[RMDB]
Conditions: 150 mM KOAc, 10 mM MgCl2 and 150 mM bicine (pH 8.5), 24 C. Structure probing data (2A3 and DMS) for a 177-nucleotide construct. For 2A3, 606 sequencing reads were counted. For DMS, 1,939 sequencing reads were counted.

RNA sequence: GGGAACGACUCGAGUAGAGUCGAAAAAGGUCGGCAGGGAUGCGAGGGGCUGAACGGUUUCGACUUCGCGCAUCGAAUCAAGGGAAGCGUGCCGGUGCAGGCAAGAGACCACCGUAAGCGAAAAUAAUACAUCCCUGUGCUUCGGCACGGGGAUGUAAAAAGAAACAACAACAACAAC
Reactivity to 2A3 in 0.01 (KOAc 150mM, MgCl2 10mM, bicine 150mM(pH8.5), 24C), signal-to-noise 1, nucleotides 027 to 126: a000g010g030u130c000g000g000c030a030g100g000g030a030u130g040c060g040a110g010g010g120g000c070u080g040a070a030c030g090g000u000u040u030c030g080a060c030u020u010c030g000c000g000c020a090u020c000g120a080a040u160c080a090a120g090g000g000a040a000g060c000g010u000g020c020c000g000g060u010g000c040a030g000g020c000a030a000g030a000g040a090c000c010a020c010c030g030u040a010a010g020c020g050a000a000a000a010u190a050a020
Reactivity to DMS in 0.01 (KOAc 150mM, MgCl2 10mM, bicine 150mM(pH8.5), 24C), signal-to-noise 1, nucleotides 027 to 126: a060g020g000u000c010g000g030c020a070g050g050g010a080u030g040c000g000a070g000g000g010g000c030u000g000a080a020c160g000g030u020u020u000c040g000a080c080u000u000c020g040c040g040c140a100u000c020g020a050a110u050c100a030a060g000g000g000a160a070g030c060g020u020g000c050c040g000g000u010g000c000a010g060g010c050a090a070g000a090g000a150c040c000a110c040c040g000u010a020a090g000c030g020a020a060a050a050u030a050a150